An RNA of 207 nucleotides, treated with 2A3 and DMS and read out base by base. The reactions ran in a buffer of 150 mM KOAc, 10 mM MgCl2 and 150 mM bicine (pH 8.5), at 24 C. For 2A3 the reverse transcriptase was SuperScript II with manganese.

[RMDB]
RNA sequence: GGGAACGACUCGAGUAGAGUCGAAAAGCGCUCCUGAACGUGACUUCAGAAGACGGGCGCCGACAAGUUAGAUUGUCAAGGCGACAGUGUAGUGACACUGGGAAAUCUAACUUUCCAAUCGCCGGCGCGUUGAGUCACGUCAACAACCGUCGAGCGAACUCACCGUUUUAUUCGUAAAACGGUGAGUAAAAGAAACAACAACAACAAC
Reactivity to 2A3 in 0.01 (KOAc 150mM, MgCl2 10mM, bicine 150mM(pH8.5), 24C), signal-to-noise 4, nucleotides 027 to 156: g030c020g020c030u040c030c010u040g040a040a010c010g000u010g010a000c000u110u070c240a140g050a280a050g060a130c070g030g020g010c000g000c010c010g020a010c020a030a000g000u020u010a000g010a050u020u060g140u170c080a110a060g210g060c060g050a050c020a010g010u000g000u050a230g160u170g260a010c000a000c000u030g090g000g020a010a030a010u040c000u020a000a000c000u050u040u020c060c020a040a100u060c050g010c000c000g010g000c010g000c010g020u030u070g010a010g000u020c000a000c030g020u010c030a050a110c020a040a090c020c010g020u040c030g000a020g030c020g040a020
Reactivity to DMS in 0.01 (KOAc 150mM, MgCl2 10mM, bicine 150mM(pH8.5), 24C), signal-to-noise 2, nucleotides 027 to 156: g010c020g020c000u010c000c030u000g000a060a030c020g060u010g010a050c030u000u000c130a300g010a200a110g010a150c040g040g020g040c020g080c020c000g010a020c070a050a040g020u010u000a030g010a030u000u000g010u010c070a110a120g060g060c060g000a070c000a020g030u000g000u000a210g040u000g020a300c000a020c020u000g010g010g000a090a060a040u000c030u050a000a020c040u000u000u000c140c060a100a080u000c070g010c010c010g020g000c000g040c090g040u000u000g000a070g000u020c010a030c030g030u000c010a050a060c050a060a050c020c080g040u030c030g010a080g030c000g000a090